[RMDB]
RNA sequence: GGGAACGACUCGAGUAGAGUCGAAAAUCAGGCAAUGGCUGAAAACAUGCUCAAAAUGGGUAUGACCCAUAAUAAAAUUGACGUUCAGGUUUUAGCACAAGAUCUAGAGCGUUUAUUUAAUGGUGUAAAAUACUGAGGUAUUCGUACCUCAGUAUUUAAAAGAAACAACAACAACAAC
Reactivity to DMS in 0.01 (KOAc 150mM, MgCl2 10mM, bicine 150mM(pH8.5), 24C), signal-to-noise 7, nucleotides 027 to 126: u000c030a040g010g010c050a140a090u010g010g020c010u000g000a040a080a080a150c030a010u000g000c010u000c020a100a080a160a140u010g010g000g000u000a020u000g010a110c010c000c000a080u000a060a080u010a090a040a020a030u000u000g000a010c000g020u000u000c010a040g010g010u000u000u010u000a100g020c250a120c230a040a030g000a010u000c000u000a100g010a020g010c010g010u000u000u000a010u000u000u000a070a070u010g010g020u010g010u010a090
Reactivity to 2A3 in 0.01 (KOAc 150mM, MgCl2 10mM, bicine 150mM(pH8.5), 24C), signal-to-noise 3, nucleotides 027 to 126: u020c020a000g070g000c040a100a290u220g170g000c010u040g000a030a010a020a010c010a000u030g000c010u010c030a150a240a080a220u240g000g000g020u010a020u020g020a030c000c000c010a020u110a120a060u070a000a080a000a010u020u020g000a000c010g000u010u000c000a000g030g060u000u010u020u080a080g060c070a030c010a140a010g000a010u000c000u070a090g000a000g000c000g010u010u030u040a030u000u050u050a100a100u100g100g010u060g040u100a030